[RMDB]
RNA sequence: GGGAACGACUCGAGUAGAGUCGAAAAGCGGGGGUCGGGGCCGAGGAGGAAGAGGCAGAGGAGGAAGAGGCGGAGGCCGCCGAGGACGUCAGGGGGGUCCCGGGCCCACCCUGGCCGCGCCCCCCCGGCUACCGAUUUGGUUCGCCAAAUCGGUAGCAAAAGAAACAACAACAACAAC
Reactivity to 2A3 in 0.01 (KOAc 150mM, MgCl2 10mM, bicine 150mM(pH8.5), 24C), signal-to-noise 2, nucleotides 027 to 126: g130c040g020g000g010g000g000u090c030g010g060g000g000c010c010g050a060g000g070a050g050g030a150a120g000a110g030g040c080a040g030a060g030g000a070g050g030a140a020g030a100g090g020c080g020g030a080g080g000c040c000g020c000c000g010a110g000g030a020c000g010u100c040a070g000g000g000g000g000g000u020c060c090c090g050g030g010c040c000c000a170c020c030c020u000g000g000c000c010g110c000g010c000c010c000c010c000c060c000g060